[RMDB]
RNA sequence: GGGAACGACUCGAGUAGAGUCGAAAACAAGUUCGUGCAUGCGACUUACACGUAGGGCGAGGGGUGGGCGAAAGUUGCCAUGAGACCGUAACUUUCGUAGUCAUUGAUAAAGGGGCAGGUCUCGCUCAAAACCUCCCGUGGUUCGCCACGGGAGGAAUCAUUAGAAGGAGUUCGCUCCUUCUAAUGAAAAAGAAACAACAACAACAAC
Reactivity to 2A3 in 0.01 (KOAc 150mM, MgCl2 10mM, bicine 150mM(pH8.5), 24C), signal-to-noise 2, nucleotides 027 to 156: c050a030a000g040u170u130c010g010u050g080c090a080u220g060c010g010a040c030u040u050a030c060a010c100g050u100a070g010g020g020c080g040a090g020g000g030g080u240g000g020g000c020g010a000a000a000g050u020u010g010c030c090a180u130g030a000g000a010c010c000g000u010a000a000c000u000u020u000c020g010u010a030g050u070c040a050u050u160g070a080u070a120a060a030g000g000g050g000c000a000g000g000u000c000u020c000g000c000u080c010a040a110a070a070c000c010u020c010c000c000g010u010g000g000u060u060c110g010c040c000a000c000g000g000g010a000g000g010a000a000

Notes:
An RNA of 207 nucleotides, treated with 2A3 and read out base by base. Reactivities are given for positions 27 through 156. The data come from the RNA Mapping Database (RMDB), library M2RFOK. The RNA was probed in 150 mM KOAc, 10 mM MgCl2 and 150 mM bicine (pH 8.5) at 24 C.